[RMDB]
RNA sequence: GGGAACGACUCGAGUAGAGUCGAAAAGAGACACAUGGUGGAAGGACAGCAGCUCUUGGGCCCGCAGGUCUCUGCGCCAGUAGGAGGGGCUGUGCAGUCAGGCCCCGGAGCCCCAGCUCCCGCCCCGCGUUGGAGAGACAUUCGUGUCUCUCCAACGAAAAGAAACAACAACAACAAC
Reactivity to DMS in 0.01 (KOAc 150mM, MgCl2 10mM, bicine 150mM(pH8.5), 24C), signal-to-noise 2, nucleotides 027 to 126: g000a070g000a090c070a050c080a110u010g010g050u020g000g010a110a080g030g010a090c110a060g030c110a080g010c000u000c010u010u000g000g010g010c030c040c000g000c080a270g030g000u000c080u000c010u010g010c070g010c070c080a090g010u000a060g010g000a080g020g000g000g000c000u010g010u010g020c090a100g020u010c170a160g010g000c040c000c020c050g010g000a070g000c020c030c090c120a110g010c080u010c020c000c090g010c050c000c040c000g020
Reactivity to 2A3 in 0.01 (KOAc 150mM, MgCl2 10mM, bicine 150mM(pH8.5), 24C), signal-to-noise 1, nucleotides 027 to 126: g030a000g070a020c030a000c020a150u170g040g080u090g060g060a160a050g050g010a020c000a070g060c010a000g000c030u030c020u020u010g000g000g020c020c020c060g000c020a010g000g120u010c040u010c010u090g090c030g050c050c050a130g110u200a090g010g120a020g000g010g000g000c020u060g110u100g070c000a020g060u070c070a020g010g000c000c000c000c000g040g000a010g000c020c000c000c000a010g000c020u000c000c020c020g010c030c030c000c000g010